[RMDB]
RNA sequence: GGGAACGACUCGAGUAGAGUCGAAAAGUGGUGCGCGGAGAGGGUAACCACCGGCGCGCGUCACUGAUAUAUCCACCGGGGGGUAAGUGGAGAAAAGGAUACAGCGCGACGAAGUUAGCACGCUGCCGAAAUGUACCCACAUUCGUGUGGGUACAAACGUGGGAAUAGAUUUCGAUCUAUUCCCACGAAAAGAAACAACAACAACAAC
Reactivity to 2A3 in 0.01 (KOAc 150mM, MgCl2 10mM, bicine 150mM(pH8.5), 24C), signal-to-noise 1, nucleotides 027 to 156: g020u010g010g010u010g000c020g000c050g110g140a160g020a090g090g050g030u080a130a120c060c040a030c020c040g040g060c010g000c000g000c000g000u000c000a000c000u000g000a000u030a000u030a010u140c040c060a060c030c090g040g000g020g000g000g000u010a040a060g030u080g040g030a010g050a010a060a060a030g010g000a000u030a130c040a010g020c010g020c000g050a080c040g020a130a010g010u030u090a020g050c000a000c010g000c000u000g000c020c000g010a030a090a010u060g000u000a000c000c020c000a000c000a000u010u060c190g020u000g000u000g030g000g000u000a000c000a000a000a000
Reactivity to DMS in 0.01 (KOAc 150mM, MgCl2 10mM, bicine 150mM(pH8.5), 24C), signal-to-noise 2, nucleotides 027 to 156: g020u000g030g000u000g020c000g040c000g010g030a230g000a120g030g010g020u010a120a110c160c120a080c030c000g030g010c030g020c000g030c040g030u000c000a030c040u010g010a090u000a080u000a110u000c040c030a160c040c040g020g010g000g000g020g010u000a040a070g030u000g030g000a100g000a070a070a060a160g010g020a220u000a080c000a090g000c000g020c020g000a130c050g010a150a140g000u000u000a130g020c030a020c040g000c030u000g010c000c050g000a100a120a100u000g010u000a010c020c000c020a010c010a120u000u000c300g020u000g020u000g010g000g000u000a010c000a000a030a080
Chemical mapping of a 207-nucleotide RNA with 2A3 and DMS.